[RMDB]
Source information: Structure probing data (2A3 and DMS) for a 177-nucleotide construct. Reactivities are given for positions 27 through 126. For DMS, 1,411 sequencing reads were counted. The data come from the RNA Mapping Database (RMDB), library OK2TRN. DMS adducts were read by reverse transcription with MarathonRT.

RNA sequence: GGGAACGACUCGAGUAGAGUCGAAAAUAGCUUCCAUUCAGUCAGCAGAAUUGGGAUCCCACAUCGGCGAUGACUUUGUGAACUUAACAGUUAAUCCGGAGGGAACAUCGGAGAGAUCCACAGUCCCUCUACUCGUGAUCUUCGGAUCACGAGUAGAAAAAGAAACAACAACAACAAC
Reactivity to 2A3 in 0.01 (KOAc 150mM, MgCl2 10mM, bicine 150mM(pH8.5), 24C), signal-to-noise 1, nucleotides 027 to 126: u110a020g020c070u090u000c010c010a020u030u080c030a050g170u040c030a030g090c010a020g020a120a080u130u050g050g000g070a050u070c050c070c000a010c020a060u140c030g020g010c060g060a040u040g010a000c030u090u160u040g060u050g090a060a010c030u060u140a080a020c020a080g060u000u100a080a000u000c040c000g000g060a030g020g030g020a070a080c040a130u070c040g000g010a020g000a000g000a050u000c000c000a060c020a020g050u020c000c000c040
Reactivity to DMS in 0.01 (KOAc 150mM, MgCl2 10mM, bicine 150mM(pH8.5), 24C), signal-to-noise 2, nucleotides 027 to 126: u010a100g040c120u000u000c020c010a090u000u000c080a080g010u000c060a050g040c080a050g020a050a080u000u010g020g000g000a100u000c050c030c010a020c140a050u000c050g000g020c030g000a080u000g000a020c050u010u030u000g000u000g000a060a070c060u000u000a040a120c150a080g020u000u000a080a140u010c040c020g000g000a050g000g000g000a070a040c070a030u000c160g020g000a050g000a200g000a100u000c010c010a070c180a090g000u000c000c010c000